[RMDB]
RNA sequence: GGGAACGACUCGAGUAGAGUCGAAAAUCCUAAGUCAACGAUGAAGUAACACUUGGAUUUAUGGGAGGGAGAAUCGGAAACGAUUCUUUGAUCUCCCAUUGUCAGUGUUAUGGAGGUCGUUGAUAUGGAAAAAGACAGCAUGUUCGCAUGCUGUCAACGAAGGAUCGUUCUUCGGAACGAUCCUUCGAAAAGAAACAACAACAACAAC
Reactivity to 2A3 in 0.01 (KOAc 150mM, MgCl2 10mM, bicine 150mM(pH8.5), 24C), signal-to-noise 1, nucleotides 027 to 156: u040c000c000u020a130a020g000u010c010a010a010c010g000a020u180g020a040a010g000u000a000a000c000a030c020u140u180g150g020a040u230u010u300a000u040g000g010g000a010g010g040g000a000g000a010a010u000c000g010g000a090a060a000c000g010a000u010u020c000u140u050u020g050a020u020c000u000c010c000c000a000u010u000g000u000c000a000g000u000g020u030u000a000u000g000g010a000g170g000u020c000g000u000u020g000a000u010a030u030g010g060a050a100a000a050a110g000a000c000a000g000c010a030u030g000u060u150c300g000c140a000u000g000c000u050g000u000c000a010a010

An RNA of 207 nucleotides, treated with 2A3 and read out base by base. Reactivities are given for positions 27 through 156.